RNA sequence: GGGAACGACUCGAGUAGAGUCGAAAAUGCGCAAUUUGGGGAUGCCCGAAGAGAUUAUUGCGCAGCGGGUUGACCGGGCGUUGACUUUGGUCGAUGCGCAAGGAUUUCGCCAUAAAUCUAUCCAGCAAUUCAUCUAGAGAUUCGUCUCUAGAUGAAUAAAAGAAACAACAACAACAAC
Reactivity to DMS in 0.01 (KOAc 150mM, MgCl2 10mM, bicine 150mM(pH8.5), 24C), signal-to-noise 7, nucleotides 027 to 126: u000g010c010g000c020a020a030u000u000u010g010g000g010g010a150u010g010c010c010c020g010a070a090g010a280g010a130u000u010a090u000u000g000c010g020c010a050g020c040g000g020g010u000u000g000a050c020c020g000g000g000c040g020u010u010g010a100c010u000u000u010g040g010u000c010g010a020u000g000c010g010c020a100a120g000g010a060u000u000u000c190g020c100c110a080u000a060a030a020u000c020u010a110u000c040c040a120g010c180a090
Reactivity to 2A3 in 0.01 (KOAc 150mM, MgCl2 10mM, bicine 150mM(pH8.5), 24C), signal-to-noise 6, nucleotides 027 to 126: u040g000c010g000c010a010a060u050u060u120g030g000g020g050a110u220g210c010c010c010g050a110a020g060a020g020a090u120u090a010u070u130g000c010g000c000a000g020c010g030g070g020u050u060g010a020c000c000g010g030g000c110g110u110u260g080a290c000u050u070u300g010g000u010c000g000a010u100g050c010g000c030a030a040g040g000a020u020u050u040c080g000c060c010a050u170a050a060a010u020c010u040a070u030c020c010a020g050c040a080